RNA sequence: GGGAACGACUCGAGUAGAGUCGAAAAGUAUGGAUGCCACCGUGACGGCUCAAUCACACAAGUGCCAACGAUAACGAGGCGCUCGCUAUUGCUGCGUAACUGACGGCCUGACGGUCUGACGUCACAAAAAACGAAAAGUGGUUCGCCACUUUUCGAAGAUGUUCCUCAGGUUCGCCUGAGGAACAUCAAAAGAAACAACAACAACAAC
Reactivity to 2A3 in 0.01 (KOAc 150mM, MgCl2 10mM, bicine 150mM(pH8.5), 24C), signal-to-noise 3, nucleotides 027 to 156: g080u070a080u210g070g020a010u060g010c030c000a020c020c010g010u030g050a110c100g030g000c020u040c140a130a130u120c040a060c020a020c010a140a010g010u020g020c020c000a070a010c040g030a070u040a150a020c050g020a060g230g100c130g110c100u020c010g000c030u030a040u160u240g020c050u030g000c030g020u030a020a070c040u030g030a040c040g010g000c000c030u070g040a000c000g050g020u000c070u040g040a050c020g010u000c020a010c040a150a120a020a010a010a010c000g000a010a000a000a000g000u000g010g010u030u090c140g050c050c020a020c000u000u000u000u000c000g000a010a000
Structure probing data (2A3) for a 207-nucleotide construct.
Reactivities are given for positions 27 through 156.
It was measured as part of the RMDB library M2RFPK.
The RNA was probed in 150 mM KOAc, 10 mM MgCl2 and 150 mM bicine (pH 8.5) at 24 C.
2A3 adducts were read by reverse transcription with SuperScript II with manganese.